The record gives the reactivity of an RNA of 177 nucleotides to DMS and 2A3. 2A3 adducts were read by reverse transcription with SuperScript II with manganese. For DMS, 2,123 sequencing reads were counted. The reactions ran in a buffer of 150 mM KOAc, 10 mM MgCl2 and 150 mM bicine (pH 8.5), at 24 C. It was measured as part of the RMDB library TTRDES.
RNA sequence: GGGAACGACUCGAGUAGAGUCGAAAAGAUAUGGAAUAGGUACAUUGCGAUGAAAUACAUCGGAAACGAUGUAUGGAGCAGGUACUAUUCCUAAGUCAAAAGACCGUGGGCGUUCGCGCCCACGGUCGUUACCCUAAGUCUUCGGACUUAGGGUAACAAAAGAAACAACAACAACAAC
Reactivity to DMS in 0.01 (KOAc 150mM, MgCl2 10mM, bicine 150mM(pH8.5), 24C), signal-to-noise 2, nucleotides 027 to 126: g000a020u000a060u020g010g020a020a020u010a090g010g010u010a010c010a300u010u010g030c000g020a140u020g000a170a130a010u000a000c010a000u010c010g020g010a000a000a050c000g000a020u010g000u010a020u000g000g000a020g020c020a180g010g000u000a020c000u000a010u010u010c000c000u000a010a070g000u020c000a110a100a180a230g000a020c000c000g100u010g030g000g010c000g030u010u000c270g010c020g060c030c000c000a000c000g000g000u000c010
Reactivity to 2A3 in 0.01 (KOAc 150mM, MgCl2 10mM, bicine 150mM(pH8.5), 24C), signal-to-noise 3, nucleotides 027 to 126: g000a000u030a000u050g000g050a010a000u020a130g290g060u070a080c040a160u150u300g020c010g300a300u010g000a020a000a010u000a000c000a000u010c010g020g030a010a020a000c020g010a000u000g000u000a000u010g020g010a000g000c040a030g230g000u020a030c000u000a010u000u000c000c000u000a010a000g000u000c010a020a040a180a290g000a000c030c050g070u020g100g030g070c200g150u200u270c300g090c040g000c300c000c000a000c020g000g000u030c010